RNA sequence: GGGAACGACUCGAGUAGAGUCGAAAAGAACUUUGGCCGGCUCGGAAUAGAAUCAGGGGGUGCAAACUGCUCACUGGCAGAAAGGAUUAUAGCAAAUGCGUACCCUAUUGCAAUACAGCCCGGCCAACAUAGACUACUCUAUUCGUAGAGUAGUCAACAUUCGAUGUUAGUUCGCUAACAUCGAAUGAAAAGAAACAACAACAACAAC
Reactivity to 2A3 in 0.01 (KOAc 150mM, MgCl2 10mM, bicine 150mM(pH8.5), 24C), signal-to-noise 5, nucleotides 027 to 156: g040a080a010c030u000u010u020g000g000c000c000g010g000c020u050c100g050g050a110a070u180a190g070a090a050u140c090a100g010g010g000g000g020u080g000c010a050a060a080c070u010g000c000u000c040a060c070u050g030g000c050a030g170a090a100a020g090g020a080u100u080a070u250a090g020c020a020a030a060u040g000c020g030u120a100c000c020c000u030a080u030u090g050c050a050a040u040a170c020a020g030c050c030c010g010g000c000c000a000a000c000a000u060a010g000a000c000u000a000c000u000c000u000a010u050u050c120g030u070a010g000a000g000u000a000g000u000c000a000a000
Reactivity to DMS in 0.01 (KOAc 150mM, MgCl2 10mM, bicine 150mM(pH8.5), 24C), signal-to-noise 2, nucleotides 027 to 156: g020a100a120c040u000u000u000g040g040c000c000g000g030c040u000c060g030g040a220a140u000a120g000a110a160u000c140a060g010g030g010g010g050u000g060c020a040a080a200c090u010g000c030u000c110a130c100u000g030g010c020a080g000a100a100a130g020g000a150u000u000a100u000a110g000c050a050a100a160u000g010c130g020u000a130c000c020c010u000a120u000u000g010c050a120a120u000a170c010a050g000c060c020c020g040g000c000c020a000a000c080a120u010a130g020a000c000u000a010c010u000c010u000a050u000u020c230g040u000a000g010a000g000u000a010g020u000c010a060a150
Chemical mapping of a 207-nucleotide RNA with 2A3 and DMS. Conditions: 150 mM KOAc, 10 mM MgCl2 and 150 mM bicine (pH 8.5), 24 C. The 2A3 profile rests on 3,699 reads. For 2A3 the reverse transcriptase was SuperScript II with manganese.